[RMDB]
Background: The record gives the reactivity of an RNA of 177 nucleotides to 2A3 and DMS. Values cover nucleotides 27 to 126. For 2A3 the reverse transcriptase was SuperScript II with manganese. The DMS profile rests on 832 reads. Values are in units of 0.01, from 0 to 300, in steps of 10.
RNA sequence: GGGAACGACUCGAGUAGAGUCGAAAAGAAAGAAAGUAGAAUGAUGAAAGAGGUAGCAAUUUGCAGCAGAUUUUUCGUGAUUGAAUCAAACAAAGAUUAACCUUUACAGAACCGCUACACUGAUAAAUCACUCACAUCACUUCGGUGAUGUGAGUGAAAAAGAAACAACAACAACAAC
Reactivity to 2A3 in 0.01 (KOAc 150mM, MgCl2 10mM, bicine 150mM(pH8.5), 24C), signal-to-noise 1, nucleotides 027 to 126: g130a000a060a000g130a100a050a000g000u130a000g030a190a090u140g060a000u010g000a110a020a000g080a000g000g050u030a000g000c000a010a020u000u000u210g030c030a030g110c120a060g120a190u000u000u000u000u160c270g050u080g010a040u050u030g000a020a030u000c080a030a000a100c040a100a010a020g000a080u060u000a090a030c000c000u100u040u000a030c020a050g090a080a000c020c020g000c000u000a000c030a010c010u000g010a180u030a030a020a030
Reactivity to DMS in 0.01 (KOAc 150mM, MgCl2 10mM, bicine 150mM(pH8.5), 24C), signal-to-noise 1, nucleotides 027 to 126: g000a020a120a110g000a050a090a100g050u000a030g000a160a000u000g000a150u010g000a010a120a100g000a010g080g000u000a000g000c000a150a080u040u000u000g020c260a110g070c100a030g020a040u000u000u000u000u010c040g080u070g000a070u000u080g000a030a180u000c040a000a190a040c120a000a050a030g000a000u000u040a100a100c000c040u000u020u030a220c100a050g000a160a030c070c110g000c000u000a000c080a140c110u000g000a080u000a100a140a250